[RMDB]
RNA sequence: GGGAACGACUCGAGUAGAGUCGAAAAUAUGCUAUGCGAGUAUGAUGCAAAGAUGUUUAAUGAUACGAUACUAGAUUUUAUCUCUAGCGAGAGAUGUCGUUAGAAUCAUUUAUCAUAACUACGUUUAAUAAUAAUUCAUCAACGAAUAUCGAUAACAGUACAAAUUGAUCUUCGGAUCAAUUUGUACAAAAGAAACAACAACAACAAC
Reactivity to DMS in 0.01 (KOAc 150mM, MgCl2 10mM, bicine 150mM(pH8.5), 24C), signal-to-noise 2, nucleotides 027 to 156: u010a060u020g000c040u000a080u010g020c040g020a100g010u000a000u010g020a030u000g000c080a040a130a160g020a040u000g020u000u020u000a080a090u020g030a090u000a040c030g000a290u000a030c000u000a010g010a060u010u000u010u000a070u020c280u000c000u000a020g010c020g020a290g000a180g000a090u010g040u000c030g010u000u010a110g000a010a040u000c010a040u000u000u000a030u000c020a020u000a020a080c030u010a050c050g020u000u000u000a050a050u000a010a080u010a060a140u010u000c030a110u000c040a070a060c050g010a100a130u000a090u020c020g010a120u000a050a150c060a170
Reactivity to 2A3 in 0.01 (KOAc 150mM, MgCl2 10mM, bicine 150mM(pH8.5), 24C), signal-to-noise 5, nucleotides 027 to 156: u170a050u090g030c040u030a020u100g000c000g010a010g010u030a010u030g030a010u020g040c130a070a040a020g020a010u070g060u200u080u030a050a020u030g020a010u010a030c030g010a040u020a080c010u030a030g020a120u070u110u150u300a170u130c030u000c010u020a010g030c070g030a030g010a020g030a140u020g020u020c010g000u010u030a040g040a040a010u010c040a030u020u050u060a020u010c020a010u050a120a130c020u090a110c040g000u000u090u000a050a050u090a030a010u030a070a050u090u100c040a070u050c050a080a060c050g020a070a050u070a060u180c040g030a010u050a150a040c040a050